[RMDB]
RNA sequence: GGGAACGACUCGAGUAGAGUCGAAAACAUUCUUAUACUGUGAGCUAUACUGACCUCACCAGAGUAUUUCACAGUGAUAGAACCACAAACAAUCAGUGGGUGGUCGCUGCCUUUGGUGUAACAGACGCUCUUAGAUUUCGUUCGCGAAAUCUAAGAGAAAAGAAACAACAACAACAAC
Reactivity to DMS in 0.01 (KOAc 150mM, MgCl2 10mM, bicine 150mM(pH8.5), 24C), signal-to-noise 4, nucleotides 027 to 126: c190a180u010u000c020u010u010a190u030a050c010u000g000u000g000a030g010c300u010a040u000a090c010u000g000a130c070c080u000c110a030c080c020a070g000a170g000u000a030u000u000u000c070a080c000a000g010u000g000a110u000a010g010a040a140c030c030a030c060a070a050a110c160a110a120u020c140a070g010u000g010g010g040u000g000g000u010c040g000c040u010g020c070c030u000u000u010g020g040u010g000u000a090a070c100a050g000a170c260g020
Reactivity to 2A3 in 0.01 (KOAc 150mM, MgCl2 10mM, bicine 150mM(pH8.5), 24C), signal-to-noise 3, nucleotides 027 to 126: c020a060u080u100c040u060u180a100u060a160c030u020g010u040g040a020g010c040u050a020u050a200c020u050g110a180c020c020u040c020a040c010c010a000g020a010g070u060a140u050u140u120c080a040c010a020g000u020g030a010u030a080g140a040a020c010c010a040c040a020a160a020c050a050a130u240c040a030g020u060g030g000g010u020g050g010u080c010g000c040u040g020c010c030u050u060u080g020g000u040g010u020a060a010c020a040g110a070c050g040